[RMDB]
The data come from the RNA Mapping Database (RMDB), library RFMREP. Chemical mapping of a 177-nucleotide RNA with 2A3 and DMS.

RNA sequence: GGGAACGACUCGAGUAGAGUCGAAAAGGAGCCUCGUUAAAAAUCCUAUCUGACAAGCGUUUAGUUCGGAUGAGCCGCGCCAUCGUUAAAAACGCGGAAGCCAACUGGUGGGAGUAAAAUACCAUCUGUCAAUGUAAUACUUCGGUAUUACAUUGACAAAAGAAACAACAACAACAAC
Reactivity to 2A3 in 0.01 (KOAc 150mM, MgCl2 10mM, bicine 150mM(pH8.5), 24C), signal-to-noise 1, nucleotides 027 to 126: g000g010a030g020c010c090u060c080g060u030u060a070a130a070a040a080u020c030c000u020a040u000c080u020g070a020c040a130a170g020c070g060u020u080u130a060g030u060u120c120g020g030a060u020g030a030g040c000c000g000c000g010c000c000a120u080c020g090u060u090a080a110a000a020a000c010g000c000g000g000a010a010g110c070c020a000a030c020u050g000g000u000g020g000g020a050g050u120a040a010a060a040u090a060c000c010a000u000c020u020
Reactivity to DMS in 0.01 (KOAc 150mM, MgCl2 10mM, bicine 150mM(pH8.5), 24C), signal-to-noise 1, nucleotides 027 to 126: g000g050a210g000c010c020u000c090g020u000u000a000a130a100a220a070u000c010c030u000a080u010c040u030g020a080c040a140a100g010c090g030u000u010u010a110g000u000u020c120g020g000a060u000g000a060g020c010c000g000c030g020c190c000a060u010c070g020u000u000a030a060a060a040a060c040g020c050g000g000a100a090g020c090c040a050a060c080u010g000g020u000g000g000g020a080g010u010a110a060a070a110u010a160c020c020a030u000c020u020
About this RNA
2A3 adducts were read by reverse transcription with SuperScript II with manganese. DMS adducts were read by reverse transcription with MarathonRT.